[RMDB]
RNA sequence: GGGAACGACUCGAGUAGAGUCGAAAAUCACUGGGUACCGCGCGGCGUGAAGGCGGUAAAACUCAUUAAUGAGGAAUCCGUCAUUAAAGGGAGUGUCAGCAACUUCGGCCGUGAUGAUGACACCACCGCGUCGUGGCAUGUUCGCAUGCCACGACGCAAAAGAAACAACAACAACAAC
Reactivity to 2A3 in 0.01 (KOAc 150mM, MgCl2 10mM, bicine 150mM(pH8.5), 24C), signal-to-noise 1, nucleotides 027 to 126: u160c000a000c020u060g010g010g020u060a050c000c000g000c000g000c000g110g000c050g000u020g140a220a070g000g000c030g000g000u030a000a000a000a000c000u000c000a100u000u300a200a100u150g000a000g070g100a160a000u200c060c080g090u000c000a020u000u240a070a070a070g000g060g000a130g050u020g100u210c100a070g010c040a120a090c010u020u020c000g060g000c000c000g010u000g020a020u110g000a000u120g000a000c000a000c040c000a000c040c000